Conditions: 150 mM KOAc, 10 mM MgCl2 and 150 mM bicine (pH 8.5), 24 C. Structure probing data (2A3) for a 177-nucleotide construct. Reactivities are given for positions 27 through 126. For 2A3, 478 sequencing reads were counted. 2A3 adducts were read by reverse transcription with SuperScript II with manganese. Source: RMDB library OK1LIB, as collected in RNAgym.
RNA sequence: GGGAACGACUCGAGUAGAGUCGAAAACAGAUCACUUGGAGUCAGGAAUUCAAGUCCAGCCUGACCAACAUGGUGAAACCACAUCUAUACUAAAAAUACAGAAGGUCGCUGGGCACGGUGGCGCGUGACGAGGCGUCCCAUUCGUGGGACGCCUCGUAAAAGAAACAACAACAACAAC
Reactivity to 2A3 in 0.01 (KOAc 150mM, MgCl2 10mM, bicine 150mM(pH8.5), 24C), signal-to-noise 1, nucleotides 027 to 126: c080a000g130a100u020c000a010c010u020u030g000g090a000g080u000c010a010g060g130a170a110u240u250c110a030a000g090u010c000c010a000g050c090c140u050g000a000c010c000a020a060c000a090u070g000g010u000g110a180a020a040c000c130a180c000a000u010c010u030a240u060a210c060u090a100a020a070a030a010u090a020c000a010g070a160a000g150g000u000c020g000c090u010g010g000g000c100a010c000g020g020u020g000g000c000g050c070g050u000g130